The record gives the reactivity of an RNA of 177 nucleotides to DMS and 2A3. 2A3 is a SHAPE reagent: it acylates the 2'-hydroxyl of flexible nucleotides of all four kinds. Reactivities are given for positions 27 through 126. The reactions ran in a buffer of 150 mM KOAc, 10 mM MgCl2 and 150 mM bicine (pH 8.5), at 24 C.

RNA sequence: GGGAACGACUCGAGUAGAGUCGAAAAACAAUGACCUUGUCCCGCGCAUUUACCGUUGUGUCGAAAUAAGGCGUAAGCCUGUGAACCAUUAUAAGCGAUUGAUUGUGUGCUGAGUGGAAAGACUUGGACUAAUUCUAAGGUUCGCCUUAGAAUUAGUAAAAGAAACAACAACAACAAC
Reactivity to DMS in 0.01 (KOAc 150mM, MgCl2 10mM, bicine 150mM(pH8.5), 24C), signal-to-noise 9, nucleotides 027 to 126: a100c100a080a050u020g000a110c120c030u000u010g000u010c010c020c010g020c130g000c060a050u010u010u010a070c100c060g010u000u010g010u000g000u000c040g010a070a070a070u020a060a020g010g010c010g010u030a090a120g010c000c000u000g010u010g010a080a120c070c040a060u010u010a070u010a080a070g010c040g010a070u010u010g010a080u010u010g020u010g000u010g010c020u010g000a080g010u000g010g000a090a080a100g000a090c020u000u000g000g010
Reactivity to 2A3 in 0.01 (KOAc 150mM, MgCl2 10mM, bicine 150mM(pH8.5), 24C), signal-to-noise 8, nucleotides 027 to 126: a000c080a040a100u150g060a070c000c000u010u040g050u020c000c020c000g000c000g000c020a090u060u080u090a110c050c040g040u070u090g060u050g030u070c010g050a050a060a080u200a090a010g010g000c020g060u070a080a000g010c000c000u020g020u040g030a030a030c030c010a050u090u110a070u120a220a040g050c050g050a050u020u110g080a080u060u070g080u010g020u010g060c030u020g010a040g020u070g020g070a030a060a020g060a030c000u010u030g020g010